[RMDB]
RNA sequence: GGGAACGACUCGAGUAGAGUCGAAAAUGCUCGCUCUCCCUCAGGGCUUCCAACGCAGUAAGCAGGUACGUGCAUGUCAGCAUAUUCUCGCUGCAGGCUCGAGGUCUUUGGUGAGAGUAGUGAUCAACCAUAGAUACUCGUUCGCGAGUAUCUAUGGAAAAGAAACAACAACAACAAC
Reactivity to 2A3 in 0.01 (KOAc 150mM, MgCl2 10mM, bicine 150mM(pH8.5), 24C), signal-to-noise 2, nucleotides 027 to 126: u090g000c030u030c110g000c010u000c000u000c000c010c000u030c030a020g000g010g000c000u030u000c020c010a070a030c100g000c020a020g040u120a200a040g030c080a010g140g070u070a040c130g020u020g000c030a040u150g280u300c100a020g000c010a010u030a060u090u070c040u000c010g030c020u000g010c010a020g070g000c090u080c140g000a000g000g020u020c000u040u070u050g010g010u160g000a010g000a000g000u010a040g010u030g030a090u100c050a000a080
Reactivity to DMS in 0.01 (KOAc 150mM, MgCl2 10mM, bicine 150mM(pH8.5), 24C), signal-to-noise 3, nucleotides 027 to 126: u000g000c020u000c080g030c020u000c010u000c000c030c010u000c120a060g020g010g000c000u010u000c000c050a110a160c120g010c010a020g010u000a100a090g030c120a040g010g010u010a030c150g050u000g020c020a140u010g010u020c240a120g010c010a040u010a130u000u000c010u000c020g010c010u000g010c060a070g000g020c140u010c120g010a020g000g020u000c000u000u000u040g000g010u000g020a030g000a010g020u000a010g020u000g000a100u000c100a090a250
Chemical mapping of a 177-nucleotide RNA with 2A3 and DMS. The DMS profile rests on 3,268 reads. High 2A3 reactivity points to a flexible backbone, as in loops and unpaired stretches. DMS adducts were read by reverse transcription with MarathonRT. For 2A3, 3,203 sequencing reads were counted. Source: RMDB library RFMREP, as collected in RNAgym. The reactions ran in a buffer of 150 mM KOAc, 10 mM MgCl2 and 150 mM bicine (pH 8.5), at 24 C. Reactivities are given for positions 27 through 126.